[RMDB]
Description
The record gives the reactivity of an RNA of 177 nucleotides to 2A3 and DMS. It was measured as part of the RMDB library OK1LIB. The reactions ran in a buffer of 150 mM KOAc, 10 mM MgCl2 and 150 mM bicine (pH 8.5), at 24 C.
RNA sequence: GGGAACGACUCGAGUAGAGUCGAAAACAGUGAUGGAAACAUCACUGAAAAACCGGAAACGGACAUGACGAUCGCCCGCAUGUCGGGAAACCGUAAACGAGAAAAGAGCUAGCGAAAGCUAGCUCAACACUGCUAAAUAUUUCGAUAUUUAGCAGUGAAAAGAAACAACAACAACAAC
Reactivity to 2A3 in 0.01 (KOAc 150mM, MgCl2 10mM, bicine 150mM(pH8.5), 24C), signal-to-noise 6, nucleotides 027 to 126: c000a010g000u000g000a000u010g000g030a050a020a000c000a000u000c000a000c000u000g010a040a000a000a000a000c040c000g030g000a140a140a030c050g050g030a010c020a050u080g070a070c010g030a070u110c060g100c050c030c000g000c040a060u080g030u100c020g030g010g020a130a070a010c010c010g030u080a070a100a070c130g040a060g120a110a070a030a050g000a000g010c000u000a000g000c000g060a070a030a000g000c000u000a000g010c000u000c000a000a010
Reactivity to DMS in 0.01 (KOAc 150mM, MgCl2 10mM, bicine 150mM(pH8.5), 24C), signal-to-noise 4, nucleotides 027 to 126: c000a000g020u000g000a010u010g000g010a210a090a120c000a010u010c000a020c000u020g000a050a050a000a160a160c180c000g010g000a040a090a240c040g010g020a040c040a010u000g010a100c110g000a110u020c140g000c180c050c010g000c010a030u000g000u010c000g000g020g000a040a070a250c030c020g000u020a020a050a080c100g000a130g000a090a040a090a090g000a010g040c000u000a000g000c000g030a100a030a160g000c000u010a000g000c000u000c000a000a050